[RMDB]
Chemical mapping of a 207-nucleotide RNA with 2A3. As a SHAPE reagent, 2A3 marks flexible, mostly unpaired nucleotides at the ribose 2'-OH.
RNA sequence: GGGAACGACUCGAGUAGAGUCGAAAAGAAAGAAAGAAAGCGGUUGGGUGGGUCCAUCGACCGUCGUGGCGUAUUCGGACGCUUUACAACGACGCGAGGAAAUAGCGAGACCGACCACCCCCUUUAACAGAGGUAUAGUAGUUCGCUACUAUACCAACUAGACUUCGUACUUCGGUACGAAGUCUAGAAAAGAAACAACAACAACAAC
Reactivity to 2A3 in 0.01 (KOAc 150mM, MgCl2 10mM, bicine 150mM(pH8.5), 24C), signal-to-noise 1, nucleotides 027 to 156: g030a000a010a000g040a060a150a000g020a020a100a000g080c050g060g080u100u070g170g040g020u010g010g000g060u000c000c010a120u040c000g000a000c010c050g000u000c000g000u000g000g020c000g000u060a070u140u220c180g060g060a000c000g010c000u110u170u090a110c030a060a000c000g000a000c000g030c030g020a010g000g070a100a220a070u060a070g100c060g000a060g030a080c040c020g000a020c000c000a010c000c000c000c000c000u000u170u000a060a110c120a030g080a040g240g000u000a010u000a000g010u000a000g000u010u110c300g000c060u000a000c000u000a000u000a000c000c000a000a000